[RMDB]
RNA sequence: GGGAACGACUCGAGUAGAGUCGAAAACGGGAAGGAGGCCAGUGCUACCAGGGUUAUCUCACAACCUCAGAUGCUGGAUAAGUCGACGGAGGCAGAAUCGCUUUGGGAUGACAUUCAGAAAGCCUGGCUCGACUAUUCUUUUCGAAGAAUAGUCGAGAAAAGAAACAACAACAACAAC
Reactivity to DMS in 0.01 (KOAc 150mM, MgCl2 10mM, bicine 150mM(pH8.5), 24C), signal-to-noise 7, nucleotides 027 to 126: c090g000g010g010a070a040g000g020a080g010g000c010c010a030g010u030g020c020u000a140c120c060a140g020g000g000u000u000a050u010c040u010c080a070c150a080a110c020c020u000c050a100g010a110u010g020c020u000g000g020a080u030a070a100g000u010c050g010a110c150g010g010a060g000g000c050a090g000a080a100u030c160g010c110u010u000u020g000g000g000a090u010g000a040c040a070u010u020c040a030g000a100a110a080g000c000c000u000g000g000
Reactivity to 2A3 in 0.01 (KOAc 150mM, MgCl2 10mM, bicine 150mM(pH8.5), 24C), signal-to-noise 8, nucleotides 027 to 126: c040g040g000g050a050a040g020g050a030g010g030c010c010a040g020u060g060c020u050a060c000c040a040g010g020g000u030u060a060u050c070u020c030a060c040a030a060c010c010u030c010a040g050a110u120g020c030u030g020g050a070u060a130a040g060u070c030g020a060c050g100g020a010g030g000c030a020g140a110a070u130c060g010c070u100u060u070g030g020g010a030u070g010a020c020a060u050u080c010a050g070a060a030a000g010c000c000u020g010g000